Chemical mapping of a 207-nucleotide RNA with DMS and 2A3.
[RMDB]
RNA sequence: GGGAACGACUCGAGUAGAGUCGAAAACAGCAAGGUUUAGCUUUCCGUGUGUGUGCUGUAUUCAACUCCCUGCAGACACACGGGGUGUUUCUGGUGCCUGCCGCUGCUAGAAUGGCUGGUUUUGAAUUGGUGUUUAUUUCAGUAAUAGGAUGGGACAAUGCAUUUAUGAGUUCGCUCAUAAAUGCAUAAAAGAAACAACAACAACAAC
Reactivity to DMS in 0.01 (KOAc 150mM, MgCl2 10mM, bicine 150mM(pH8.5), 24C), signal-to-noise 1, nucleotides 027 to 156: c020a080g030c010a120a100g000g000u010u010u000a090g000c040u000u000u000c020c000g000u000g030u010g060u010g020u000g020c000u050g040u010a130u010u000c160a060a140c060u020c020c040c030u010g020c010a060g010a040c020a030c010a030c040g030g010g030g020u000g010u000u000u000c030u020g000g020u000g020c010c000u010g020c000c020g030c050u000g030c010u000a070g010a090a060u000g030g030c030u000g030g030u000u000u000u000g020a050a120u000u020g020g020u000g000u010u000u000a050u040u030u010c050a110g000u000a070a090u000a130g000g000a120u010g010g020g000a100c070a120
Reactivity to 2A3 in 0.01 (KOAc 150mM, MgCl2 10mM, bicine 150mM(pH8.5), 24C), signal-to-noise 2, nucleotides 027 to 156: c030a010g050c010a050a120g100g010u100u210u210a030g020c010u060u060u040c020c010g020u000g000u010g020u010g010u020g030c010u000g060u180a190u160u240c110a100a130c040u120c030c030c030u000g000c010a010g020a120c000a000c000a010c030g000g000g010g000u040g010u010u060u020c030u020g060g000u060g040c010c020u030g020c010c030g010c000u050g000c000u030a070g100a160a110u100g060g010c050u010g030g040u050u040u040u070g100a110a060u030u030g010g010u050g070u070u070u070a120u040u110u060c030a020g050u060a080a080u080a160g000g080a030u090g020g040g000a040c090a080
Record summary: 2A3 adducts were read by reverse transcription with SuperScript II with manganese. For DMS the reverse transcriptase was MarathonRT. Reactivities are given for positions 27 through 156.